[RMDB]
RNA sequence: GGGAACGACUCGAGUAGAGUCGAAAAGUAAUAGUAAUUGAACUUAGUACGAGAGGAACCGUUCAUUCACGUAAUUGGUAUUUACAUCUGUUUGAUAAGACAAUGUUGUGAAGCUACCACGUGUUGGCUCUAUAAGCGAGUUCGCUCGCUUAUAGAGAAAAGAAACAACAACAACAAC
Reactivity to 2A3 in 0.01 (KOAc 150mM, MgCl2 10mM, bicine 150mM(pH8.5), 24C), signal-to-noise 3, nucleotides 027 to 126: g050u090a000a200u100a200g090u080a060a130u080u090g020a010a010c010u010u010a000g020u020a000c010g000a030g010a010g080g000a000a020c010c000g000u010u000c010a000u000u070c040a020c010g020u030a150a130u110u050g000g000u030a140u080u040u040a000c000a010u010c030u030g120u030u040u050g300a270u170a140a020g030a020c010a060a120u180g000u060u000g000u020g000a030a000g050c060u030a030c020c010a040c040g020u060g040u070u080g080g020
Reactivity to DMS in 0.01 (KOAc 150mM, MgCl2 10mM, bicine 150mM(pH8.5), 24C), signal-to-noise 5, nucleotides 027 to 126: g000u010a080a090u000a120g020u010a070a050u000u010g010a030a020c010u000u000a070g010u000a170c010g010a240g010a200g000g010a090a110c210c220g000u000u000c020a040u000u010c030a020c030g010u000a080a110u010u010g010g010u000a040u000u000u000a000c000a020u000c040u000g010u000u000u000g010a180u010a070a070g010a010c010a040a070u010g010u000u010g010u000g000a020a040g020c130u000a030c080c040a050c120g010u000g010u000u000g010g000
Conditions: 150 mM KOAc, 10 mM MgCl2 and 150 mM bicine (pH 8.5), 24 C. An RNA of 177 nucleotides, treated with 2A3 and DMS and read out base by base. Reactivities are rounded to 0.1 and cut off at 0 and 3. DMS adducts were read by reverse transcription with MarathonRT. For 2A3 the reverse transcriptase was SuperScript II with manganese. The data come from the RNA Mapping Database (RMDB), library RFMREP.